[RMDB]
RNA sequence: GGGAACGACUCGAGUAGAGUCGAAAAGGCUCACCUUCACGCCCGCUGAGUAGAUGUAGUCGCAUACUCCAAUGACUUGGGGUCACUGUGUAAACGUACUACAGAUCUACGGCCAUGUGACUGGCGGCCAGUUAUUGAUCUUCGGAUCAAUAACUGGAAAAGAAACAACAACAACAAC
Reactivity to 2A3 in 0.01 (KOAc 150mM, MgCl2 10mM, bicine 150mM(pH8.5), 24C), signal-to-noise 3, nucleotides 027 to 126: g030g000c020u020c060a160c000c000u080u100c020a040c060g020c010c040c010g000c060u100g090a020g050u010a000g000a010u010g000u000a000g000u000c000g000c020a020u110a210c000u000c010c010a000a090u250g150a160c170u010u030g000g000g000g000u000c000a020c050u000g020u010g010u020a020a020a000c070g120u010a010c000u010a010c020a040g130a130u000c010u000a000c000g010g000c000c010a140u170g050u060g050a110c100u030g000g000c000g020g000
Reactivity to DMS in 0.01 (KOAc 150mM, MgCl2 10mM, bicine 150mM(pH8.5), 24C), signal-to-noise 3, nucleotides 027 to 126: g030g020c050u000c080a080c040c040u000u020c030a060c050g010c090c120c130g010c080u010g020a140g010u000a020g010a030u000g000u000a000g000u010c010g010c010a010u000a010c010u000c010c010a010a030u010g000a150c230u010u000g000g000g000g000u000c000a000c020u000g000u010g000u000a000a060a030c050g000u020a060c010u000a010c010a040g010a170u000c000u000a020c020g000g010c000c080a090u010g010u000g000a080c200u020g010g020c120g020g020